An RNA of 207 nucleotides, treated with 2A3 and DMS and read out base by base.
Source: RMDB library OK3TST, as collected in RNAgym.
Conditions: 150 mM KOAc, 10 mM MgCl2 and 150 mM bicine (pH 8.5), 24 C.
DMS adducts were read by reverse transcription with MarathonRT.

[RMDB]
RNA sequence: GGGAACGACUCGAGUAGAGUCGAAAAUUCUUGGACAAACUGGAGCUGACUGUAUAGUAUGCUGAAGACAUUUCCUCACCUUGUCUCUCUCCUGACCCUCCAAGGGCCCCUUACACCAUCACCUACUUGACAGGAGCAUUGCAAGGUGUGAUAAUAAUAUACCUAGUGGAUUCGUCCACUAGGUAUAAAAAGAAACAACAACAACAAC
Reactivity to 2A3 in 0.01 (KOAc 150mM, MgCl2 10mM, bicine 150mM(pH8.5), 24C), signal-to-noise 2, nucleotides 027 to 156: u050u000c000u020u040g030g000a000c020a010a190a060c090u030g000g010a000g040c020u040g070a020c000u010g020u070a090u000a090g070u030a040u110g030c020u100g040a010a000g070a050c000a090u070u100u040c020c020u020c010a000c000c030u020u070g110u080c020u020c000u000c000u000c040c000u050g090a140c060c000c000u080c060c000a010a010g000g010g000c010c030c000c020u020u120a080c050a070c030c010a070u050c020a090c060c000u120a150c010u120u140g080a040c010a010g000g000a010g000c050a020u030u030g000c030a030a000g010g000u000g010u000g010a000u020a060a010u120a020a050
Reactivity to DMS in 0.01 (KOAc 150mM, MgCl2 10mM, bicine 150mM(pH8.5), 24C), signal-to-noise 3, nucleotides 027 to 156: u000u000c000u010u000g020g000a110c050a060a090a150c050u000g010g010a090g030c040u000g020a090c070u020g030u000a100u010a110g010u010a080u000g010c020u010g010a080a110g020a100c090a100u000u000u000c030c010u010c030a050c030c030u000u020g000u000c050u000c070u000c010u000c010c010u000g000a090c050c020c050u000c110c090a060a070g030g020g000c000c010c030c020u010u010a080c070a140c050c040a080u000c030a060c040c020u000a050c030u020u000g010a160c010a020g020g000a040g000c080a060u000u000g020c030a030a070g020g020u000g010u000g000a050u010a050a070u000a090a180